[RMDB]
RNA sequence: GGGAACGACUCGAGUAGAGUCGAAAAAGAAUUGUACCACCACUGCGUAUCCUAAACGGGCUCUGCAGUGGUUAUUCUUGUAAAGUACUAGGAGUGAGUAGUGGCCCGUAUUGCAGGCAUUAACAUUAAAAGGCAAUCCACUUCGGUGGAUUGCCAACAUGAAGCCUAUGUUCGCAUAGGCUUCAUGAAAAGAAACAACAACAACAAC
Reactivity to DMS in 0.01 (KOAc 150mM, MgCl2 10mM, bicine 150mM(pH8.5), 24C), signal-to-noise 2, nucleotides 027 to 156: a060g000a010a050u000u000g020u010a090c110c110a150c010c000a010c000u010g030c000g030u000a070u010c020c000u000a080a130a140c170g040g010g000c060u000c030u000g040c020a050g020u000g000g040u000u000a000u000u000c020u000u000g010u000a090a120a130g010u000a070c070u000a120g000g000a110g030u010g000a120g030u010a090g000u000g010g020c010c000c020g000u000a070u010u000g040c010a070g020g020c020a030u010u000a090a080c050a070u000u010a050a040a130a170g020g010c010a020a020u000c010c000a030c000u000u000c250g010g020u000g020g020a000u000u000g010c030c020a010a010
Reactivity to 2A3 in 0.01 (KOAc 150mM, MgCl2 10mM, bicine 150mM(pH8.5), 24C), signal-to-noise 1, nucleotides 027 to 156: a000g030a030a070u130u020g010u020a050c000c060a020c000c000a000c000u000g000c010g030u020a060u120c030c000u100a140a160a090c110g010g000g010c040u030c170u180g000c020a000g000u000g000g020u000u000a020u010u000c010u000u000g000u050a070a080a100g030u050a080c050u030a040g130g010a100g030u080g070a030g020u060a010g020u010g090g000c030c060c000g030u040a170u000u160g060c040a000g010g090c060a020u210u080a230a060c020a060u170u170a120a200a030a000g000g000c000a000a000u010c000c000a010c030u000u050c160g050g000u000g000g000a010u000u000g000c000c000a000a000

An RNA of 207 nucleotides, treated with DMS and 2A3 and read out base by base. Values are in units of 0.01, from 0 to 300, in steps of 10. High 2A3 reactivity points to a flexible backbone, as in loops and unpaired stretches. The reactions ran in a buffer of 150 mM KOAc, 10 mM MgCl2 and 150 mM bicine (pH 8.5), at 24 C.